[RMDB]
RNA sequence: GGGAACGACUCGAGUAGAGUCGAAAAAGAUUGUCACAGUCUUCCAGGGUAGGACCAGCUUCCUGCAAGGGAUGGUGGUGGGUGGCAGCAGAUCCCAGACACCUGUGUGGGCCAGGCUGCAGAGCAGCGGCCUCAGCCCAUUCGUGGGCUGAGGCCGAAAAGAAACAACAACAACAAC
Reactivity to 2A3 in 0.01 (KOAc 150mM, MgCl2 10mM, bicine 150mM(pH8.5), 24C), signal-to-noise 2, nucleotides 027 to 126: a010g100a140u210u170g060u090c070a010c040a110g010u030c010u050u030c000c030a060g000g030g110u180a060g050g200a090c000c030a030g010c060u030u030c010c010u000g000c000a040a070g070g050g000a080u040g100g100u080g000g070u100g000g060g030u050g080g000c010a000g000c010a000g020a130u010c010c000c000a030g010a000c130a130c060c100u180g000u010g000u060g060g000g000c040c000a050g000g010c000u000g020c010a000g000a130g120c130a030g040
Reactivity to DMS in 0.01 (KOAc 150mM, MgCl2 10mM, bicine 150mM(pH8.5), 24C), signal-to-noise 2, nucleotides 027 to 126: a100g000a080u020u030g000u040c040a050c090a120g000u000c030u000u000c070c060a080g040g040g000u020a080g000g020a080c090c120a020g000c080u000u010c000c000u000g000c110a090a100g000g020g010a030u010g000g010u000g000g000u010g000g010g000u040g000g000c080a000g030c040a130g010a080u030c030c010c020a020g000a080c030a080c240c140u060g030u010g000u000g000g010g000c150c160a070g050g030c000u040g000c020a060g050a160g000c110a140g000
Chemical mapping of a 177-nucleotide RNA with 2A3 and DMS. The RNA was probed in 150 mM KOAc, 10 mM MgCl2 and 150 mM bicine (pH 8.5) at 24 C.